[RMDB]
RNA sequence: GGGAACGACUCGAGUAGAGUCGAAAACAUGGAGUCUUCGGACUCCAUGCACUACCGUAAUAAUGCCUCGGUAUAAAAGGCAAACCCUUGGAAACAAGGGAACGAUGUCACGAUUCGUCGUGACAAAACAGCUUAUUCGUUUCGACGAAUAAGCUGUAAAAGAAACAACAACAACAAC
Reactivity to 2A3 in 0.01 (KOAc 150mM, MgCl2 10mM, bicine 150mM(pH8.5), 24C), signal-to-noise 2, nucleotides 027 to 126: c000a000u000g000g000a000g000u020c010u040u060c280g060g000a000c000u000c000c000a000u010g000c000a020c000u060a000c000c000g040u030a070a100u130a150a080u230g020c000c000u020c010g000g020u080a070u220a300a060a020a030g010g000c030a020a040a190c010c000c010u000u000g000g010a050a010a020c000a020a010g000g000g030a010a010c040g070a050u090g010u000c000a000c020g000a010u040u040c160g070u020c000g000u080g000a000c000a000a000a020
Reactivity to DMS in 0.01 (KOAc 150mM, MgCl2 10mM, bicine 150mM(pH8.5), 24C), signal-to-noise 2, nucleotides 027 to 126: c000a010u000g000g000a000g000u000c000u000u000c240g020g000a020c000u000c000c000a010u020g000c100a140c010u000a030c010c000g000u010a110a080u010a110a070u000g000c000c000u000c000g000g010u000a100u010a030a000a040a010g020g000c030a050a110a110c000c000c000u010u000g000g000a180a140a220c000a000a000g000g000g010a040a040c270g000a070u000g010u000c000a000c000g000a020u000u010c260g010u000c000g010u000g000a020c010a030a000a100
The record gives the reactivity of an RNA of 177 nucleotides to 2A3 and DMS. For DMS the reverse transcriptase was MarathonRT. The DMS profile rests on 1,588 reads. The reactions ran in a buffer of 150 mM KOAc, 10 mM MgCl2 and 150 mM bicine (pH 8.5), at 24 C.